[RMDB]
The record gives the reactivity of an RNA of 177 nucleotides to 2A3. It was measured as part of the RMDB library OK1LIB. For 2A3, 706 sequencing reads were counted. The RNA was probed in 150 mM KOAc, 10 mM MgCl2 and 150 mM bicine (pH 8.5) at 24 C.
RNA sequence: GGGAACGACUCGAGUAGAGUCGAAAAUAAAACAAACAAAUGUUCCUUGGAUUGCUACGGUCACCAGAUUUGUGUAAUCUGGCCGUUAGGAACUUAAAAUAGCAAUCAAGCACUGAGAACAGUGCAACGCUCAGAUGGUCUUCGGACCAUCUGAGCGAAAAGAAACAACAACAACAAC
Reactivity to 2A3 in 0.01 (KOAc 150mM, MgCl2 10mM, bicine 150mM(pH8.5), 24C), signal-to-noise 1, nucleotides 027 to 126: u070a000a040a000a060c080a000a010a000c020a030a020a000u230g000u000u000c000c000u010u080g060g000a000u000u000g000c000u000a000c000g000g030u000c030a000c030c000a010g000a000u000u050u110g300u080g050u160a000a000u000c000u000g060g000c000c000g000u000u000a000g000g010a000a000c000u070u160a090a000a000a030u080a080g070c000a000a000u060c000a000a030g000c020a000c000u040g050a150g080a300a000c000a020g000u000g000c000a020a040